[RMDB]
RNA sequence: GGGAACGACUCGAGUAGAGUCGAAAAAGAAUUGUACCACCACUGCGUAUCCUAAACGGGCUCUGCAGUGGUUAUUCUUGUAAAGUACUAGGAGUGAAUAGUGGACCGUAUUGCAGGCAUUAACAUUAAAAGGCAAUCCACUUCGGUGGAUUGCCAACAUAGGGUUGAACUUCGGUUCAACCCUAUGAAAAGAAACAACAACAACAAC
Reactivity to DMS in 0.01 (KOAc 150mM, MgCl2 10mM, bicine 150mM(pH8.5), 24C), signal-to-noise 1, nucleotides 027 to 156: a070g010a030a030u000u000g020u010a080c020c030a110c000c000a020c000u000g030c000g000u000a060u010c000c000u010a070a110a110c210g020g010g030c020u000c040u000g020c000a040g030u000g000g000u000u000a000u000u000c020u000u020g000u000a070a130a100g020u000a050c030u000a070g020g010a120g030u000g020a060a070u010a070g040u000g010g000a100c060c030g030u000a060u000u000g000c040a070g000g000c050a050u000u000a060a080c090a120u010u000a050a040a070a090g000g000c010a010a000u000c000c000a020c000u000u000c300g040g020u000g000g010a010u000u010g000c000c000a000a030
Reactivity to 2A3 in 0.01 (KOAc 150mM, MgCl2 10mM, bicine 150mM(pH8.5), 24C), signal-to-noise 2, nucleotides 027 to 156: a010g060a010a040u090u040g070u100a070c020c040a000c010c000a000c000u020g000c010g050u080a060u180c010c020u110a230a230a180c120g030g000g010c020u000c100u250g000c000a000g000u010g000g000u000u000a000u000u000c000u040u010g030u110a010a100a130g080u010a030c030u030a030g050g050a030g030u070g030a120a040u030a080g070u070g040g000a020c020c010g010u060a080u060u090g000c040a040g020g070c040a030u110u110a150a010c000a090u090u200a160a140a010a040g000g010c000a000a000u000c000c000a000c000u020u060c160g040g000u000g000g000a000u000u000g000c000c000a000a000

Source: RMDB library M2RFPK, as collected in RNAgym. Structure probing data (DMS and 2A3) for a 207-nucleotide construct. Reactivities are rounded to 0.1 and cut off at 0 and 3. Values cover nucleotides 27 to 156. DMS adducts were read by reverse transcription with MarathonRT.